[RMDB]
Chemical mapping of a 177-nucleotide RNA with DMS. For DMS the reverse transcriptase was MarathonRT. The RNA was probed in 150 mM KOAc, 10 mM MgCl2 and 150 mM bicine (pH 8.5) at 24 C.

RNA sequence: GGGAACGACUCGAGUAGAGUCGAAAAGAUAUGGAAAUUUAGUUACUUUCUCAUAGUAGCUAGCUCCGCAUCGGAAACGAUGCCGAGCUUGGACCUACAUGAGAAAGUAACUAAAUUUCCUAAGUCAGUCAUAAUUUAUCUUCGGAUAAAUUAUGACAAAAGAAACAACAACAACAAC
Reactivity to DMS in 0.01 (KOAc 150mM, MgCl2 10mM, bicine 150mM(pH8.5), 24C), signal-to-noise 3, nucleotides 027 to 126: g010a040u010a300u010g000g000a010a000a010u000u000u000a030g020u010u010a010c000u000u010u010c000u000c000a000u000a160g020u000a050g000c020u010a020g000c000u000c000c300g000c010a020u010c000g000g000a140a150a280c010g000a010u000g010c000c270g020a020g020c000u010u000g030g010a080c300c000u000a010c000a020u000g000a010g010a040a020a000g010u000a010a010c000u000a000a010a000u000u000u000c000c000u000a000a080g020u010c070a130